[RMDB]
RNA sequence: GGGAACGACUCGAGUAGAGUCGAAAAACAAGUGGUGGUAGGCCGCCACUCUAAGGGGACGCCUUUAGAAGAAGAGGCUAGGGGGUAUUCCGGUGUGGGAUACUUAGUAAUAUGCAACGCUAAUUGCUCAAGGAUAGAUGAUUCGUCAUCUAUCCAACUUACAUAACCAGUUCGCUGGUUAUGUAAGAAAAGAAACAACAACAACAAC
Reactivity to DMS in 0.01 (KOAc 150mM, MgCl2 10mM, bicine 150mM(pH8.5), 24C), signal-to-noise 1, nucleotides 027 to 156: a100c040a030a070g000u010g020g040u000g020g040u000a070g040g000c010c000g030c040c000a140c080u020c050u000a020a050g030g000g020g050a160c300g010c010c030u000u000u000a070g000a120a190g000a150a050g020a090g000g020c020u010a070g080g000g010g010g060u000a060u000u000c000c000g010g000u000g000u010g040g040g010a050u000a000c010u000u010a030g010u000a100a120u000a120u000g030c020a040a030c040g000c060u000a050a060u000u010g010c020u010c060a110a290g010g030a020u010a030g000a020u010g000a070u000u000c300g040u000c000a010u000c010u010a000u000c000c000a010a000
Reactivity to 2A3 in 0.01 (KOAc 150mM, MgCl2 10mM, bicine 150mM(pH8.5), 24C), signal-to-noise 3, nucleotides 027 to 156: a010c100a040a040g010u010g030g030u020g020g040u070a060g080g060c020c030g000c010c000a010c010u010c000u010a080a060g030g000g000g020a000c070g070c010c000u080u020u010a070g020a130a000g030a020a000g030a010g040g000c020u020a030g020g030g010g000g000u030a030u110u020c050c070g110g090u150g070u170g090g000g010a010u020a030c010u030u020a040g030u090a070a140u090a050u280g010c030a050a020c040g010c090u090a050a100u070u080g010c020u060c230a110a060g000g000a000u000a010g010a000u000g010a000u050u040c140g050u000c080a010u000c010u000a000u000c000c000a000a000

An RNA of 207 nucleotides, treated with DMS and 2A3 and read out base by base.
It was measured as part of the RMDB library M2RFPK.
Reactivities are rounded to 0.1 and cut off at 0 and 3.
The DMS profile rests on 1,663 reads.
2A3 adducts were read by reverse transcription with SuperScript II with manganese.
As a SHAPE reagent, 2A3 marks flexible, mostly unpaired nucleotides at the ribose 2'-OH.
Conditions: 150 mM KOAc, 10 mM MgCl2 and 150 mM bicine (pH 8.5), 24 C.